[RMDB]
RNA sequence: GGGAACGACUCGAGUAGAGUCGAAAAGAUAUGGAUGUUCAGACCGCUUCCCAUAGUAGGGAGCUCGGAUUCGGAAACGAAUCUCGAGCUUUGAUCUAUUGGGAAGCGGUCUGAACAUCCUAAGUCAGGAGAGGUAAUAGUUCGCUAUUACCUCUCCAAAAGAAACAACAACAACAAC
Reactivity to DMS in 0.01 (KOAc 150mM, MgCl2 10mM, bicine 150mM(pH8.5), 24C), signal-to-noise 1, nucleotides 027 to 126: g020a080u000a300u000g000g010a020u000g000u000u010c000a000g000a020c000c000g030c000u000u020c010c010c000a030u000a000g010u010a300g020g020g020a010g010c000u000c000g000g010a040u000u010c000g010g030a150a130a260c000g010a020a000u000c000u010c000g010a000g010c000u000u000u000g000a230u010c020u000a000u000u020g010g000g000a020a000g030c000g000g010u000c000u010g010a000a000c010a000u000c000c000u020a010a060g020u010c060a100

The record gives the reactivity of an RNA of 177 nucleotides to DMS.
Source: RMDB library TTRINS, as collected in RNAgym.